This 177-nucleotide RNA was probed chemically with 2A3 and DMS. The reactions ran in a buffer of 150 mM KOAc, 10 mM MgCl2 and 150 mM bicine (pH 8.5), at 24 C. For DMS, 3,104 sequencing reads were counted. 2A3 is a SHAPE reagent: it acylates the 2'-hydroxyl of flexible nucleotides of all four kinds.
[RMDB]
RNA sequence: GGGAACGACUCGAGUAGAGUCGAAAAAUACAGCGUAAUCGAGCGGAGGAAAACGGCACUCCGAAAAUGCGGUACGAUUAUGAUCCCACUGCGUCGACGCUAGAUGCAGAACCGGAUUGCCGAGGAAAUAACAAGAUUCGUUCGCGAAUCUUGUUAUAAAAGAAACAACAACAACAAC
Reactivity to 2A3 in 0.01 (KOAc 150mM, MgCl2 10mM, bicine 150mM(pH8.5), 24C), signal-to-noise 3, nucleotides 027 to 126: a000u180a010c040a040g070c030g030u030a030a020u050c020g010a020g050c030g030g050a050g000g040a000a080a060a070c010g040g000c000a010c030u000c000c010g020a080a050a010a030u170g000c060g050g020u070a030c020g030a030u080u050a050u170g070a040u040c010c000c000a030c020u010g000c000g000u020c010g030a070c150g020c230u080a030g010a010u030g000c010a010g000a030a010c040c010g080g000a060u020u090g000c010c010g010a040g000g100a060a280
Reactivity to DMS in 0.01 (KOAc 150mM, MgCl2 10mM, bicine 150mM(pH8.5), 24C), signal-to-noise 4, nucleotides 027 to 126: a110u000a110c150a100g000c020g020u010a030a030u000c040g010a200g030c050g010g020a110g000g010a050a030a070a140c030g000g010c020a070c060u000c000c010g000a030a060a080a100u020g000c040g010g000u000a110c050g000a030u000u000a030u000g000a110u000c000c000c010a250c000u000g000c010g020u000c010g010a140c240g010c160u010a060g010a030u010g000c000a020g000a070a070c210c040g000g000a080u010u000g000c000c000g010a160g000g000a050a090